[RMDB]
RNA sequence: GGGAACGACUCGAGUAGAGUCGAAAAGACACCCUUCGCAGAUGACCUCCUCGUUGGUGGGUGUCGGAUUUGUUGUCAGUCACAGGCAACAGUUAACGAUCUGCGUAAAUAAAAAGAGAAGAACAAAAGGUAUUAUCAUAUUCGUAUGAUAAUACCUAAAAGAAACAACAACAACAAC
Reactivity to 2A3 in 0.01 (KOAc 150mM, MgCl2 10mM, bicine 150mM(pH8.5), 24C), signal-to-noise 9, nucleotides 027 to 126: g000a000c000a010c000c000c000u060u100c020g000c000a000g000a010u010g010a010c000c000u060c010c010u130c070g150u150u200g000g000u010g000g000g000u000g000u000c000g000g000a070u150u100u090g000u000u010g010u010c030a050g120u150c080a080c050a140g020g000c000a000a000c000a010g010u010u070a000a010c040g010a010u000c000u000g000c000g000u010a010a050a030u160a010a050a010a030a010g170a010g040a180a040g060a100a030c080a080a150a030
Reactivity to DMS in 0.01 (KOAc 150mM, MgCl2 10mM, bicine 150mM(pH8.5), 24C), signal-to-noise 5, nucleotides 027 to 126: g020a030c020a010c000c000c030u010u040c010g000c020a010g000a010u010g010a040c010c000u000c110c010u010c100g020u030u020g010g010u000g000g020g020u010g000u000c000g020g000a120u010u010u020g010u000u000g010u010c000a120g010u050c290a120c290a120g000g000c000a000a020c010a010g000u000u010a010a010c020g020a010u000c010u000g010c000g000u070a040a060a060u040a040a090a080a100a060g000a090g000a130a090g010a050a080c120a060a070a100